[RMDB]
RNA sequence: GGGAACGACUCGAGUAGAGUCGAAAAUUAUCCUUUCGCCUAGGGGAAAGUCCCCGGACCAUGGGCAGAGAGUGCCGCGUGCACACGCGCGUAGGCUUCCCCCGCAAGUCACUGUUAGCCCGCCAAGAUAAAUUACUCCGUUCGCGGAGUAAUUUAUAAAAGAAACAACAACAACAAC
Reactivity to 2A3 in 0.01 (KOAc 150mM, MgCl2 10mM, bicine 150mM(pH8.5), 24C), signal-to-noise 2, nucleotides 027 to 126: u060u030a090u070c010c010u030u080u130c050g030c000c020u070a040g000g000g030g060a030a120a050g130u080c000c000c000c000g000g000a010c000c000a130u090g000g000g020c080a000g030a000g000a000g050u110g000c010c000g040c030g010u080g030c010a060c040a030c210g020c000g000c020g030u070a200g000g010c000u040u020c000c010c000c000c000g010c040a060a040g020u070c010a010c080u060g010u050u060a030g030c010c000c010g050c070c020a050a020g010
Reactivity to DMS in 0.01 (KOAc 150mM, MgCl2 10mM, bicine 150mM(pH8.5), 24C), signal-to-noise 2, nucleotides 027 to 126: u010u060a120u030c030c000u020u020u010c080g000c030c020u000a070g000g020g010g000a050a110a110g010u000c000c000c030c080g000g000a060c070c030a060u010g000g020g000c020a060g000a090g010a090g000u000g010c000c020g030c040g000u010g000c030a130c120a140c170g020c000g020c010g000u000a060g030g010c010u000u000c020c020c000c030c020g000c110a130a050g010u000c010a020c050u000g000u000u010a130g020c000c010c010g010c050c080a100a120g010

The data come from the RNA Mapping Database (RMDB), library RFM100. Chemical mapping of a 177-nucleotide RNA with 2A3 and DMS. The RNA was probed in 150 mM KOAc, 10 mM MgCl2 and 150 mM bicine (pH 8.5) at 24 C. For 2A3, 1,462 sequencing reads were counted. DMS adducts were read by reverse transcription with MarathonRT. For 2A3 the reverse transcriptase was SuperScript II with manganese.